Chemical mapping of a 207-nucleotide RNA with DMS and 2A3.

RNA sequence: GGGAACGACUCGAGUAGAGUCGAAAAUGACUUUUGUCCAUUAAAAUUUUGGACAAAAAGUCAGUGUUACUACUGAGGAUGAAUAAUUGUCAGUACUCUGUGGGAAUAUUUACAAUUACUUUGAUAUCUGACAAUAAUUAGUUAUAAUACAAACAGACCAUUAUCAGGAUUUCGAUCCUGAUAAUGGAAAAGAAACAACAACAACAAC
Reactivity to DMS in 0.01 (KOAc 150mM, MgCl2 10mM, bicine 150mM(pH8.5), 24C), signal-to-noise 1, nucleotides 027 to 156: u000g020a050c010u000u020u000u010g030u040c010c010a010u020u000a050a200a100a300u000u000u000u000g040g020a000c000a000a050a020a050a050g010u010c000a120g020u000g030u000u000a060c020u000a070c020u020g020a190g000g020a150u010g000a100a050u000a090a040u000u010g050u000c060a010g000u000a120c230u010c050u000g060u010g020g020g020a050a050u000a060u000u000u020a070c020a050a060u000u000a020c020u000u000u000g000a210u010a070u000c000u000g020a110c030a020a040u000a060a110u010u010a070g010u000u000a160u010a020a090u000a100c040a110a120a080c040a110g020a230
Reactivity to 2A3 in 0.01 (KOAc 150mM, MgCl2 10mM, bicine 150mM(pH8.5), 24C), signal-to-noise 3, nucleotides 027 to 156: u010g000a000c000u000u000u000u000g010u000c010c000a000u040u110a080a150a300a220u080u150u070u060g000g000a030c000a000a060a000a000a020g000u000c000a000g010u010g010u050u070a050c060u010a020c030u030g030a050g100g070a080u070g070a060a160u180a160a070u060u040g010u000c000a000g010u010a030c040u010c020u080g080u110g050g030g040a060a030u100a090u120u180u120a160c010a020a100u100u070a070c030u180u300u140g020a010u060a070u140c000u000g000a000c000a000a000u080a030a070u050u050a040g000u070u050a110u060a200a120u090a110c050a010a130a040c030a050g080a060
Annotation:
The data come from the RNA Mapping Database (RMDB), library OK3TST.